[RMDB]
RNA sequence: GGGAACGACUCGAGUAGAGUCGAAAAAAUGGUAAAGGUGUUUUUACAUUUGCAAAUGGUGUAAUUUAUGAUGGUGAAUUUUUGAAUAAUAAAUUACACGGUAAAAGUGUCAUUACAUAUUCAAAUGACGAAUAACUAAUUUCGAUUAGUUAUUCGUAAAAGAAACAACAACAACAAC
Reactivity to DMS in 0.01 (KOAc 150mM, MgCl2 10mM, bicine 150mM(pH8.5), 24C), signal-to-noise 3, nucleotides 027 to 126: a070a050u000g000g010u000a020a030a070g020g010u000g000u020u000u000u000u010a020c000a110u000u020u010g020c180a080a090a100u020g020g030u010g020u010a000a010u000u000u000a010u010g000a100u010g000g010u010g020a070a100u010u010u020u000u000g000a090a050u010a130a020u000a000a020a020u000u000a010c000a010c010g010g010u000a020a030a040a060g000u000g000u000c020a060u000u000a010c030a060u000a070u010u000c060a030a070a090u000g000
Reactivity to 2A3 in 0.01 (KOAc 150mM, MgCl2 10mM, bicine 150mM(pH8.5), 24C), signal-to-noise 1, nucleotides 027 to 126: a010a030u230g000g000u060a040a040a050g110g010u020g020u000u010u050u000u040a010c000a060u120u130u300g110c100a140a070a130u250g080g020u000g000u020a000a020u000u090u000a040u000g070a000u050g070g080u090g140a210a300u100u150u240u240u130g060a040a050u150a060a000u080a040a000a000u050u010a000c000a000c000g000g030u050a040a040a000a000g000u000g000u010c010a010u000u060a030c010a030u070a150u150u000c000a070a030a130u130g040